[RMDB]
RNA sequence: GGGAACGACUCGAGUAGAGUCGAAAAAGAUAUGGAAGAGUUCUCUAGCGUGAGCGAAGAACAUGGCGAAGUCUGGUCGGAAACGACCAGCCGAGCCAUGGGAGCUUCGGGACUCUUCCUAAGUCAACUAAGACUUUAUCUUCGGAUAAAGUCUUAGAAAAGAAACAACAACAACAAC
Reactivity to 2A3 in 0.01 (KOAc 150mM, MgCl2 10mM, bicine 150mM(pH8.5), 24C), signal-to-noise 2, nucleotides 027 to 126: a010g040a020u060a050u150g000g020a000a000g000a000g020u150u000c130u050c190u200a110g080c060g250u300g170a020g060c050g130a200a060g010a050a000c010a010u030g000g010c030g030a130a010g040u120c030u010g010g000u010c000g020g000a070a020a070c010g000a000c020c000a000g010c010c010g010a000g030c010c000a000u000g000g040g000a030g010c010u050u070c060g010g000g000a020c010u000c000u020u000c000c000u010a010a010g030u020c000a000a020
Reactivity to DMS in 0.01 (KOAc 150mM, MgCl2 10mM, bicine 150mM(pH8.5), 24C), signal-to-noise 3, nucleotides 027 to 126: a110g010a070u000a300u000g020g000a000a020g020a040g010u010u000c010u010c160u010a110g040c080g000u040g010a120g030c090g030a050a090g020a110a160c000a010u000g010g010c000g010a130a140g010u000c010u000g000g000u010c000g000g010a120a060a200c000g010a000c010c000a000g000c020c000g020a300g000c010c000a000u000g000g000g020a220g010c010u000u000c130g010g000g000a000c000u000c000u020u000c000c000u000a000a080g000u000c040a120a240